[RMDB]
RNA sequence: GGGAACGACUCGAGUAGAGUCGAAAAUGCCGCACCCCGUCCAGUUGUGAUAAUCGCCAUCGUCCCUUAUCCAAUAAUAGCUACGGUUAUCAAUUCCGCGCAGGGAGAAGGUUGGACCGUCCAGAUCCAUGGUAUUACUCUUCGGAGUAAUACCAUGAAAAGAAACAACAACAACAAC
Reactivity to 2A3 in 0.01 (KOAc 150mM, MgCl2 10mM, bicine 150mM(pH8.5), 24C), signal-to-noise 7, nucleotides 027 to 126: u090g000c010c000g000c000a050c010c020c000c000g030u030c030c040a060g020u040u060g050u100g080a050u080a080a080u070c010g030c040c020a050u040c030g070u040c010c010c000u030u070a090u070c040c030a050a070u170a170a070u090a100g010c030u050a030c050g010g020u050u030a070u150c040a050a050u120u040c030c010g030c040g000c060a050g000g060g010a050g020a070a040g050g000u030u040g020g010a020c020c010g030u020c030c000a010g010a070u000c020
Reactivity to DMS in 0.01 (KOAc 150mM, MgCl2 10mM, bicine 150mM(pH8.5), 24C), signal-to-noise 7, nucleotides 027 to 126: u020g010c030c010g020c070a120c020c000c010c050g000u030c030c040a070g000u000u000g000u010g010a060u020a060a100u010c030g000c040c020a060u010c050g010u000c000c010c010u000u000a100u020c050c060a080a090u030a050a060u020a090g010c040u000a080c050g020g010u000u000a100u020c110a070a160u010u010c020c010g010c300g010c090a090g010g000g000a070g000a100a060g000g020u010u010g000g010a040c050c020g010u000c040c040a070g000a110u020c060

About this RNA
Structure probing data (2A3 and DMS) for a 177-nucleotide construct. Reactivities are given for positions 27 through 126. The 2A3 profile rests on 7,119 reads. For DMS, 16,434 sequencing reads were counted. Source: RMDB library OK1LIB, as collected in RNAgym.